[RMDB]
RNA sequence: GGGAACGACUCGAGUAGAGUCGAAAAUCGUCGAGCUUCGGCUCGACGAAAAACGCUAACUGUAAAGCGAAGGGUGGUGCGAACGGCGCCUAACGACCGCUCAAAGAGACCCCUUCGGGGGUCUCAACUAAGUAACGUCGUUCGCGACGUUACUUAGAAAAGAAACAACAACAACAAC
Reactivity to DMS in 0.01 (KOAc 150mM, MgCl2 10mM, bicine 150mM(pH8.5), 24C), signal-to-noise 1, nucleotides 027 to 126: u000c020g030u010c020g020a020g000c010u000u030c250g030g010c000u010c010g020a020c000g000a000a020a030a140a060c040g010c020u000a110a140c150u010g020u010a110a100a110g000c030g000a140a110g030g000g000u010g020g020u010g020c070g010a010a030c020g010g050c060g010c030c050u010a030a060c110g030a080c050c030g000c020u000c010a060a070a100g020a010g000a020c000c000c000c000u000u010c260g020g010g000g020g010u010c000u010c000a010a140